[RMDB]
RNA sequence: GGGAACGACUCGAGUAGAGUCGAAAAGAUAUGGACCACUACCCACCUCGCUACUCGCGUUGAAAUCGGAAACGAUGGAGCGAGGUCGAGAGGUGGUCCUAAGUCAAAAGACGGGUUCGCCCGUCAAGAGCACAGAUCGGUUCGCCGAUCUGUGCUCAAAAGAAACAACAACAACAAC
Reactivity to 2A3 in 0.01 (KOAc 150mM, MgCl2 10mM, bicine 150mM(pH8.5), 24C), signal-to-noise 1, nucleotides 027 to 126: g040a110u250a220u190g000g010a020c010c000a040c000u150a240c090c040c020a010c000c000u000c000g110c000u300a300c050u080c030g030c040g050u250u020g100a020a010a040u080c040g050g000a040a150a020c000g000a010u070g020g020a050g000c010g020a010g040g000u010c000g030a000g000a010g000g010u000g000g060u030c000c010u030a020a020g100u010c050a060a200a060a000g000a000c060g030g000g120u070u010c260g060c080c010c010g010u000c000a000a010
Reactivity to DMS in 0.01 (KOAc 150mM, MgCl2 10mM, bicine 150mM(pH8.5), 24C), signal-to-noise 1, nucleotides 027 to 126: g010a190u000a230u000g000g000a020c000c000a010c000u000a200c000c110c010a300c110c000u000c020g000c080u000a150c030u010c020g000c010g120u000u070g000a040a100a030u000c050g000g000a060a070a090c000g000a060u000g000g010a120g020c020g020a000g010g030u000c050g010a000g000a300g000g000u000g020g000u000c000c020u000a050a020g000u060c150a030a140a080a050g030a000c010g030g000g000u000u040c250g000c000c000c000g010u000c000a040a030

Source information:
Conditions: 150 mM KOAc, 10 mM MgCl2 and 150 mM bicine (pH 8.5), 24 C. This 177-nucleotide RNA was probed chemically with 2A3 and DMS. For DMS the reverse transcriptase was MarathonRT.